[RMDB]
RNA sequence: GGGAACGACUCGAGUAGAGUCGAAAAGGUACAGAGCAGCAGGAACAUGAGGCUCCUUGUGUAGCCUCCAGUCCUAGUUUAUCAGUGACACUGCAUCAGGACCAUCUUUGUGUAUGUAACUUACCUCCCGAUGACCCGGAUUCGUCCGGGUCAUCGGAAAAGAAACAACAACAACAAC
Reactivity to DMS in 0.01 (KOAc 150mM, MgCl2 10mM, bicine 150mM(pH8.5), 24C), signal-to-noise 1, nucleotides 027 to 126: g000g000u000a030c070a090g000a300g010c070a080g000c130a050g000g010a090a210c120a130u000g010a070g020g030c000u000c000c070u000u000g000u040g020u020a000g020c010c000u000c020c170a130g000u020c050c020u000a040g010u010u000u050a080u000c030a010g000u010g000a120c170a230c050u000g030c160a020u010c100a100g000g010a110c040c070a110u000c030u000u000u000g010u000g010u000a110u000g000u000a060a080c050u010u010a250c000c030u010c060
This 177-nucleotide RNA was probed chemically with DMS.
DMS adducts were read by reverse transcription with MarathonRT.
The DMS profile rests on 637 reads.